An RNA of 177 nucleotides, treated with 2A3 and DMS and read out base by base. For 2A3, 5,577 sequencing reads were counted. 2A3 adducts were read by reverse transcription with SuperScript II with manganese.

RNA sequence: GGGAACGACUCGAGUAGAGUCGAAAAGAAUGGGGGAGGAGAGCUAAGAAAAAGAAUCCACCCGCCACCCUAAGAAAAAGAAUGCUCUCCUCCCCCUAAGAAAAGAAUGGGUGGCGGGUGGUAAGAAGGGAUAUAUCUAGUUCGCUAGAUAUAUCCCAAAAGAAACAACAACAACAAC
Reactivity to 2A3 in 0.01 (KOAc 150mM, MgCl2 10mM, bicine 150mM(pH8.5), 24C), signal-to-noise 4, nucleotides 027 to 126: g140a090a070u220g000g000g000g020g020a000g000g000a010g010a000g000c040u190a160a040g120a130a110a030a000a000g170a020a070u020c010c000a000c000c000c010g000c000c000a010c000c000c020u120a160a060g180a180a110a020a000a000g200a070a080u150g000c000u000c010u000c000c000u000c000c000c000c000c000u000a000a000g000a000a010a000a000g070a030a020u120g010g000g000u020g000g000c000g000g000g000u000g000g000u000a000a000g050a030a080
Reactivity to DMS in 0.01 (KOAc 150mM, MgCl2 10mM, bicine 150mM(pH8.5), 24C), signal-to-noise 1, nucleotides 027 to 126: g010a180a080u000g000g060g010g000g060a000g000g000a010g050a000g010c000u040a120a150g000a050a010a050a110a040g000a010a130u010c010c000a020c000c000c000g000c000c000a000c010c000c000u010a110a170g010a000a080a010a070a060g020a140a050u050g030c010u000c010u020c000c000u000c010c000c010c000c000u000a000a070g000a090a080a060a060g010a050a030u000g000g010g000u010g020g000c000g000g000g050u000g010g030u030a060a070g000a160a090

Reactivities are given for positions 27 through 126. Conditions: 150 mM KOAc, 10 mM MgCl2 and 150 mM bicine (pH 8.5), 24 C.